[RMDB]
The data come from the RNA Mapping Database (RMDB), library RFMREP. The record gives the reactivity of an RNA of 177 nucleotides to DMS and 2A3. The RNA was probed in 150 mM KOAc, 10 mM MgCl2 and 150 mM bicine (pH 8.5) at 24 C.
RNA sequence: GGGAACGACUCGAGUAGAGUCGAAAAAAGACCUGACUGUUUUUAAAAGCGAAUGCCAGUGAGUGAAAUGCCAGCUCCCUGUACAGUUACUAGAGCUCCUGGGAAUGCAUGGCCAGUGACACAAGUGCCAUGUUGUAUACUUCGGUAUACAACAUGGAAAAGAAACAACAACAACAAC
Reactivity to DMS in 0.01 (KOAc 150mM, MgCl2 10mM, bicine 150mM(pH8.5), 24C), signal-to-noise 2, nucleotides 027 to 126: a080a100g020a230c040c020u000g040a100c090u000g010u000u030u040u000u030a080a020a100a100g010c060g000a060a070u030g000c040c010a040g040u010g000a060g040u000g000a090a110a100u010g020c010c050a090g000c030u020c010c010c010u000g040u000a060c160a070g010u010u000a060c160u010a050g020a120g000c080u010c070c040u000g000g030g000a030a050u010g000c040a030u000g000g020c000c050a040g000u010g000a070c080a120c070a050a160g030u030g020
Reactivity to 2A3 in 0.01 (KOAc 150mM, MgCl2 10mM, bicine 150mM(pH8.5), 24C), signal-to-noise 1, nucleotides 027 to 126: a000a000g050a010c040c000u010g010a010c010u020g120u070u010u000u000u300a100a170a050a000g120c070g040a040a000u150g000c000c000a040g040u040g090a020g060u030g090a110a010a010u010g010c010c010a000g040c030u030c020c010c010u040g070u090a040c000a030g000u090u070a040c010u070a100g060a040g120c000u020c030c040u020g000g030g000a060a040u120g000c010a040u000g000g000c000c000a060g060u040g080a010c020a000c020a150a040g060u050g170

DMS adducts were read by reverse transcription with MarathonRT. Values cover nucleotides 27 to 126.